[RMDB]
Structure probing data (DMS and 2A3) for a 207-nucleotide construct. DMS adducts were read by reverse transcription with MarathonRT. The RNA was probed in 150 mM KOAc, 10 mM MgCl2 and 150 mM bicine (pH 8.5) at 24 C. Reactivities are given for positions 27 through 156. For DMS, 2,921 sequencing reads were counted. For 2A3 the reverse transcriptase was SuperScript II with manganese. The 2A3 profile rests on 710 reads. It was measured as part of the RMDB library OK3TST.
RNA sequence: GGGAACGACUCGAGUAGAGUCGAAAAAUGCAUAUAUCGACGCUAUGUUUGAUGUUGCUAAAGAUUCUGAUAUCAUGGCUAUUCAGCGUAAAGCAGUAAAAGGCGACUCUAUCGAAGGCGGUAAGCCGGAAGAGAAAAACGACGCCGCGCCUGUUACUGCUCUGUCAUAUUUCGAUAUGACAGAGCAAAAAGAAACAACAACAACAAC
Reactivity to DMS in 0.01 (KOAc 150mM, MgCl2 10mM, bicine 150mM(pH8.5), 24C), signal-to-noise 2, nucleotides 027 to 156: a030u000g010c070a050u010a080u000a090u000c030g020a040c030g040c040u000a060u010g000u010u000u000g030a040u010g030u020u000g000c010u000a100a110a190g000a040u010u000c020u000g030a110u010a120u000c020a090u000g020g000c000u000a100u010u000c070a080g010c050g080u000a040a090a090g010c010a090g000u010a090a020a070a080g010g010c000g020a150c070u000c020u000a090u000c080g000a220a150g020g010c000g000g020u000a100a130g040c000c000g000g000a060a070g010a150g000a080a100a060a050a140c020g000a070c040g050c000c060g050c080g060c040c030u000g000u010u000a060c080
Reactivity to 2A3 in 0.01 (KOAc 150mM, MgCl2 10mM, bicine 150mM(pH8.5), 24C), signal-to-noise 2, nucleotides 027 to 156: a000u080g000c030a010u060a000u030a000u170c020g020a010c010g050c070u110a070u180g050u010u060u150g040a030u010g040u120u060g000c030u100a070a070a030g070a070u110u020c030u130g040a010u020a010u110c100a070u070g010g000c000u030a040u110u090c080a020g000c010g100u060a090a080a000g000c040a030g070u090a030a060a090a010g020g000c000g030a040c040u000c000u030a090u180c030g010a020a020g030g000c000g070g090u170a080a010g010c050c030g000g000a050a050g030a030g050a040a060a040a020a000c040g050a010c080g000c000c010g020c000g030c000c030u020g010u080u070a030c020